[RMDB]
RNA sequence: GGGAACGACUCGAGUAGAGUCGAAAACUUAUCUUUAACUUAAAUGUUAAAAAGGUUUGAGCUCAUCAUGUUUAUUGAAGAGCUAGUAUCAACUAUGCAUCUAUAUCUGUGGUAAUUAAACAUGAUCCGCUGAUCCGCCUUUCGAGGCGGAUCAGCGAAAAGAAACAACAACAACAAC
Reactivity to 2A3 in 0.01 (KOAc 150mM, MgCl2 10mM, bicine 150mM(pH8.5), 24C), signal-to-noise 2, nucleotides 027 to 126: c000u140u110a150u160c040u010u010u010a000a000c010u140u130a110a010a070u300g000u000u020a180a000a000a000a000g060g000u000u110u080g050a040g000c010u070c000a020u050c000a000u000g020u010u010u010a040u040u080g110a000a000g000a000g000c000u000a000g010u050a110u060c010a000a120c000u020a020u190g060c100a300u000c020u090a150u030a110u210c020u100g300u230g060g170u200a090a090u120u100a000a000a040c020a020u000g000a000u050c070